[RMDB]
RNA sequence: GGGAACGACUCGAGUAGAGUCGAAAAGAAGGACAUAACGCGAAGAAGCAGAGAGAAGACUGCAGUGACGCGAAUCACUAGAAGUCAACGACGGCAAGAGAGAGCCGAAGGAGACGAUCCUUAGGAGGGACUCGUAUGCAUUCGUGCAUACGAGUCCAAAAGAAACAACAACAACAAC
Reactivity to 2A3 in 0.01 (KOAc 150mM, MgCl2 10mM, bicine 150mM(pH8.5), 24C), signal-to-noise 2, nucleotides 027 to 126: g060a000a050g050g000a040c050a100u140a110a000c060g090c060g050a230a000g040a110a000g010c000a000g000a000g070a000g020a250a080g140a070c000u010g010c030a040g040u070g040a000c000g070c000g140a120a070u100c050a030c080u020a000g140a100a000g060u000c000a000a000c040g020a000c010g000g000c040a030a000g140a010g060a040g030a020g120c000c000g000a020a000g000g000a030g000a000c010g080a080u040c000c000u070u060a020g030g050a030g020
Reactivity to DMS in 0.01 (KOAc 150mM, MgCl2 10mM, bicine 150mM(pH8.5), 24C), signal-to-noise 2, nucleotides 027 to 126: g000a010a160g000g000a070c280a000u010a090a000c180g000c010g000a140a200g000a090a130g000c010a050g000a210g000a140g010a160a170g020a090c000u000g000c030a060g000u010g000a080c040g000c150g000a170a130u000c130a060c090u040a050g000a110a200g020u000c000a050a190c020g000a300c020g000g000c000a130a110g050a010g000a170g010a300g000c010c000g050a050a070g000g000a300g000a030c060g000a050u000c000c050u070u000a040g000g000a070g000
The record gives the reactivity of an RNA of 177 nucleotides to 2A3 and DMS. Source: RMDB library OK1LIB, as collected in RNAgym. DMS (dimethyl sulfate) methylates the pairing face of unpaired adenines and cytosines. The reactions ran in a buffer of 150 mM KOAc, 10 mM MgCl2 and 150 mM bicine (pH 8.5), at 24 C. The 2A3 profile rests on 1,627 reads.